[RMDB]
RNA sequence: GGGAACGACUCGAGUAGAGUCGAAAAUGAAGACCACCGAGCGUUUCAUGACUCGGCUCGGCCCACUGCUGCGCCAUCACCGCGUGCUGAUCUGCACACCGGCCGAACACGACGAGAUACGCGCUGCGAGACUUUCCUACUUCGGUAGGAAAGUCUCAAAAGAAACAACAACAACAAC
Reactivity to 2A3 in 0.01 (KOAc 150mM, MgCl2 10mM, bicine 150mM(pH8.5), 24C), signal-to-noise 4, nucleotides 027 to 126: u200g020a040a030g090a060c000c000a020c020c000g030a010g060c020g040u100u040u010c090a070u150g070a110c030u000c050g020g000c020u010c020g020g030c010c030c000a050c050u060g020c020u020g000c020g030c000c050a070u080c010a010c040c020g050c020g050u060g000c020u040g040a110u040c060u120g000c040a030c010a010c030c040g040g000c000c010g020a020a020c110a020c070g080a020c030g010a020g010a070u080a100c030g000c020g000c060u060g040c040
Reactivity to DMS in 0.01 (KOAc 150mM, MgCl2 10mM, bicine 150mM(pH8.5), 24C), signal-to-noise 2, nucleotides 027 to 126: u000g010a220a080g000a040c040c010a110c110c000g010a150g000c040g000u000u000u000c030a120u010g000a230c250u000c030g040g040c020u000c010g020g070c070c000c070a130c160u000g000c150u000g000c020g000c140c100a060u060c070a010c050c040g020c010g000u010g000c130u020g040a170u050c140u010g140c000a060c000a050c080c300g010g050c030c010g000a090a150c210a170c060g000a010c040g050a120g040a080u000a050c000g030c090g000c070u000g020c180
Annotation
The record gives the reactivity of an RNA of 177 nucleotides to 2A3 and DMS. Values cover nucleotides 27 to 126. Conditions: 150 mM KOAc, 10 mM MgCl2 and 150 mM bicine (pH 8.5), 24 C. 2A3 adducts were read by reverse transcription with SuperScript II with manganese. For 2A3, 2,801 sequencing reads were counted.